[RMDB]
RNA sequence: GGGAACGACUCGAGUAGAGUCGAAAAAUUAAUCUCAUUUUUGGAUCUCGUGGCAAGGCCUCUGUGCUUGCGCAUGCCUUGCCACACAGUGUCAUUGGGCUUACACUACCCCCAAUUGACGCGACCCUGUACGUGCCGCAUUCGUGCGGCACGUACAAAAAGAAACAACAACAACAAC
Reactivity to 2A3 in 0.01 (KOAc 150mM, MgCl2 10mM, bicine 150mM(pH8.5), 24C), signal-to-noise 1, nucleotides 027 to 126: a000u260u160a000a000u000c030u000c060a100u010u000u040u120u000g240g070a040u190c150u090c300g030u030g010g000c000a000a000g000g000c000c000u130c000u000g000u000g010c000u000u060g000c030g000c000a000u160g070c020c000u000u000g030c000c000a000c000a000c000a020g000u040g000u010c000a000u030u030g000g000g000c000u130u070a060c030a010c240u060a080c000c000c000c000c000a000a160u070u000g020a000c030g030c000g000a060c000c000c000